[RMDB]
RNA sequence: GGGAACGACUCGAGUAGAGUCGAAAAAGGCGAUUGCGACCGCGCGCCGUCUGGGUGCAGUCGUGACCGCCACCGAUGUUCGCCCGGCGGCGAAGGAACAAGUUGCCUCGCUUGGCGCGAAGUUCAAUGCCUACCAUAGUUUCGACUAUGGUAGGCAAAAAGAAACAACAACAACAAC
Reactivity to DMS in 0.01 (KOAc 150mM, MgCl2 10mM, bicine 150mM(pH8.5), 24C), signal-to-noise 2, nucleotides 027 to 126: a100g000g020c000g020a050u000u000g000c020g000a040c040c080g010c120g010c010g000c000c040g000u010c230u010g040g020g040u000g010c030a030g000u010c010g010u010g000a000c030c000g000c020c010a040c050c000g020a090u030g010u000u000c000g010c020c000c000g000g030c080g000g000c000g020a020a080g010g020a030a090c130a100a220g010u000u020g000c010c000u010c110g000c020u000u020g030g000c060g030c010g000a030a040g010u020u000c100a090a170
Reactivity to 2A3 in 0.01 (KOAc 150mM, MgCl2 10mM, bicine 150mM(pH8.5), 24C), signal-to-noise 1, nucleotides 027 to 126: a020g050g020c010g010a030u040u010g030c020g050a040c000c020g080c020g040c020g210c130c000g070u150c170u300g200g000g000u010g040c010a030g000u030c000g000u000g000a060c020c040g010c010c000a000c010c030g070a090u140g150u060u050c020g000c010c000c000g100g000c040g030g000c070g010a090a040g010g010a040a040c030a140a100g120u190u190g060c020c020u040c030g010c020u130u170g000g000c070g000c000g030a060a040g000u010u060c080a100a040
About this RNA:
Source: RMDB library OK2TST, as collected in RNAgym. Chemical mapping of a 177-nucleotide RNA with DMS and 2A3. 2A3 adducts were read by reverse transcription with SuperScript II with manganese. The RNA was probed in 150 mM KOAc, 10 mM MgCl2 and 150 mM bicine (pH 8.5) at 24 C.